An RNA of 207 nucleotides, treated with 2A3 and DMS and read out base by base. 2A3 adducts were read by reverse transcription with SuperScript II with manganese. The DMS profile rests on 2,099 reads. DMS adducts were read by reverse transcription with MarathonRT.
[RMDB]
RNA sequence: GGGAACGACUCGAGUAGAGUCGAAAACACCGUCACUUCGGUGACGGUGAAAAAAGAUAUGGACGCUUAGGACAUGGCUGCCACUCGGAAACGAGUGGGAGCCAACAGCCUAACAUGCGUCCUAAGUCAAAAAGUGACCGAAUUCGUUCGGUCACAAGAUAGAAACCAAGUUCGCUUGGUUUCUAUCAAAAGAAACAACAACAACAAC
Reactivity to 2A3 in 0.01 (KOAc 150mM, MgCl2 10mM, bicine 150mM(pH8.5), 24C), signal-to-noise 3, nucleotides 027 to 156: c010a000c000c000g000u000c000a010c020u070u130c290g090g020u000g000a000c000g010g000u020g000a010a000a000a000a000a000g010a010u010a010u050g000g000a000c010g000c030u010u000a000g000g010a020c100a240u300g080g020c040u160g130c010c000a000c000u010c000g000g000a000a000a000c000g000a000g010u000g000g000g010a010g000c010c000a000a000c000a010g000c000c000u000a040a020c110a070u160g000c000g000u000c000c000u000a000a000g000u010c060a000a030a000a070a060g000u000g000a000c010c010g010a010a020u130u140c250g060u110u000c010g060g000u000c000a000c000a000a000
Reactivity to DMS in 0.01 (KOAc 150mM, MgCl2 10mM, bicine 150mM(pH8.5), 24C), signal-to-noise 1, nucleotides 027 to 156: c010a010c000c000g020u000c000a000c000u000u010c300g070g010u000g010a000c000g030g050u010g010a000a020a060a060a200a090g000a020u010a100u010g000g000a050c020g030c030u010u000a040g010g000a010c020a140u010g010g040c000u000g000c000c000a010c000u000c000g020g040a060a080a090c000g010a050g100u000g000g010g010a030g000c000c010a010a040c080a140g030c010c000u000a010a060c300a070u010g010c060g080u010c000c000u000a010a020g000u010c000a100a090a090a100a220g030u000g050a020c020c010g000a030a070u000u040c290g000u000u000c000g000g000u030c000a000c010a010a040